Description
This 177-nucleotide RNA was probed chemically with DMS and 2A3. 2A3 adducts were read by reverse transcription with SuperScript II with manganese. It was measured as part of the RMDB libraries RFM100 and RFMREP. The reactions ran in a buffer of 150 mM KOAc, 10 mM MgCl2 and 150 mM bicine (pH 8.5), at 24 C. Reactivities are given for positions 27 through 126.
RNA sequence: GGGAACGACUCGAGUAGAGUCGAAAAGACCAUAGCUGUCUGCAGUGCAGGAAGCCAACUAUUAAGGGGAAACAAAAGUGUUCUUAGGAGUCCUGCUGUCACUGUGGAUUGAGCCGGUGAAGCCCUGUAAGAGUCUGUAAUUCGUUACAGACUCUUAAAAAGAAACAACAACAACAAC
Reactivity to DMS in 0.01 (KOAc 150mM, MgCl2 10mM, bicine 150mM(pH8.5), 24C), signal-to-noise 9, nucleotides 027 to 126: g010a080c030c000a070u030a200g020c030u010g010u000c000u000g000c020a030g010u000g020c000a010g000g010a040a050g020c040c040a120a130c120u020a100u030u020a100a070g000g000g010g010a070a050a050c060a090a080a300a130g020u020g000u000u000c020u000u010a070g010g000a070g000u000c050c010u000g000c130u020g000u030c110a050c020u000g010u000g010g000a030u000u010g010a040g020c020c220g000g000u000g000a110a120g000c000c000c000u010g000
Reactivity to 2A3 in 0.01 (KOAc 150mM, MgCl2 10mM, bicine 150mM(pH8.5), 24C), signal-to-noise 9, nucleotides 027 to 126: g060a000c010c000a030u100a030g000c010u000g000u010c000u000g000c000a010g010u010g030c010a010g000g040a040a010g050c020c030a050a030c060u100a060u270u150a130a070g080g010g030g070a080a040a020c080a060a200a150a080g170u210g040u170u030c020u040u070a050g000g040a020g030u010c000c010u010g030c030u040g080u130c020a000c010u000g010u010g010g000a000u020u150g060a010g020c020c040g000g020u020g030a060a020g020c010c000c000u010g050